[RMDB]
RNA sequence: GGGAACGACUCGAGUAGAGUCGAAAACGCUAAAUGAUGUUCCAAUUCACUAUAGUCAAAAUUAGAACUAAAGAAUGUUGGUAAUUCAUGAACCAUUCGAUAGUGUAGCAAAGGUCCAAUUACCUCAACACUUAGGCUACUUCGGUAGCCUAAGUGUAAAAGAAACAACAACAACAAC
Reactivity to 2A3 in 0.01 (KOAc 150mM, MgCl2 10mM, bicine 150mM(pH8.5), 24C), signal-to-noise 1, nucleotides 027 to 126: c060g000c030u070a100a060a030u060g070a000u040g030u110u050c010c010a000a010u130u080c010a010c050u070a040u070a170g020u000c020a030a090a070a300u190u080a140g030a160a060c000u020a010a010a010g060a050a080u060g010u040u060g090g020u070a200a000u040u090c020a020u040g100a010a000c030c000a050u000u090c030g000a060u050a070g130u050g010u040a030g110c040a050a050a000g060g000u000c050c020a040a100u150u070a070c000c000u030c020a000
Reactivity to DMS in 0.01 (KOAc 150mM, MgCl2 10mM, bicine 150mM(pH8.5), 24C), signal-to-noise 2, nucleotides 027 to 126: c090g020c030u000a050a090a110u010g010a050u020g000u020u000c010c030a000a120u000u020c060a160c030u010a130u000a010g010u000c070a090a150a070a150u030u000a060g010a150a010c000u000a060a070a060g000a080a090u000g050u020u010g000g010u000a030a020u010u000c060a030u000g000a080a110c250c000a100u000u000c030g000a070u000a080g000u030g000u000a090g000c120a050a090a150g000g030u000c070c080a040a120u020u000a090c030c000u000c130a070

Chemical mapping of a 177-nucleotide RNA with 2A3 and DMS. Values cover nucleotides 27 to 126. It was measured as part of the RMDB library OK2TRN.